[RMDB]
RNA sequence: GGGAACGACUCGAGUAGAGUCGAAAAGUGACGGCACUCGUCGGGCCCAACGGUAGCGGCAAGAGCACGCUCCUGAGAGGUGUCGCACGCGAACUCGAGCCGGCCGACGGUCAGGUCGUCCUCGAUGGUGACUGCGUCCAUUCGUGGACGCAGUCACAAAAGAAACAACAACAACAAC
Reactivity to 2A3 in 0.01 (KOAc 150mM, MgCl2 10mM, bicine 150mM(pH8.5), 24C), signal-to-noise 2, nucleotides 027 to 126: g230u180g000a080c010g000g050c020a000c040u090c010g030u020c000g000g030g040c000c000c000a000a050c030g000g050u030a000g060c000g000g000c060a150a080g020a030g070c050a050c090g240c010u060c030c000u220g180a300g000a040g010g000u020g010u080c080g020c020a150c070g000c030g050a080a040c000u070c100g000a000g000c000c000g000g000c000c060g000a040c030g000g020u080c040a010g030g080u060c010g000u000c000c000u000c000g130a100u110g100